The record gives the reactivity of an RNA of 177 nucleotides to 2A3 and DMS.
For DMS the reverse transcriptase was MarathonRT.
For DMS, 2,949 sequencing reads were counted.
Source: RMDB library 15KREP, as collected in RNAgym.
For 2A3 the reverse transcriptase was SuperScript II with manganese.
[RMDB]
RNA sequence: GGGAACGACUCGAGUAGAGUCGAAAAUGUGGUAGUGUUGGUUACACCAAGGAGGGUAGUGUGAUCAAUUUCUGUUACAUGCAUCAAAUGGAACUUGCUAAUGGUACACAUACCGGUUCAGCAUUUGGACCCAUUAUUUGUUCGCAAAUAAUGGGUCAAAAGAAACAACAACAACAAC
Reactivity to 2A3 in 0.01 (KOAc 150mM, MgCl2 10mM, bicine 150mM(pH8.5), 24C), signal-to-noise 5, nucleotides 027 to 126: u020g010u020g020g010u020a010g000u010g020u030u000g010g000u010u010a000c000a000c010c040a050a060g150g040a050g020g080g010u070a020g010u010g000u000g020a010u000c000a010a010u110u230u030c010u000g000u010u010a010c000a010u040g030c010a120u080c010a050a050a020u060g050g010a010a010c010u030u070g010c020u100a090a060u090g010g020u110a050c140a010c010a110u050a050c020c010g050g030u020u040c030a060g020c020a050u010u030u030g080
Reactivity to DMS in 0.01 (KOAc 150mM, MgCl2 10mM, bicine 150mM(pH8.5), 24C), signal-to-noise 3, nucleotides 027 to 126: u010g010u010g000g010u010a000g020u010g010u000u000g000g010u000u000a020c030a020c010c060a080a180g020g010a050g000g010g040u000a090g010u000g000u000g020a020u000c030a020a020u000u010u010c020u000g010u000u010a030c020a020u000g020c100a140u010c080a040a050a050u010g010g010a050a040c040u000u000g020c090u000a080a060u000g000g000u010a070c210a060c170a120u000a060c080c090g000g000u010u010c100a070g000c020a050u000u000u010g000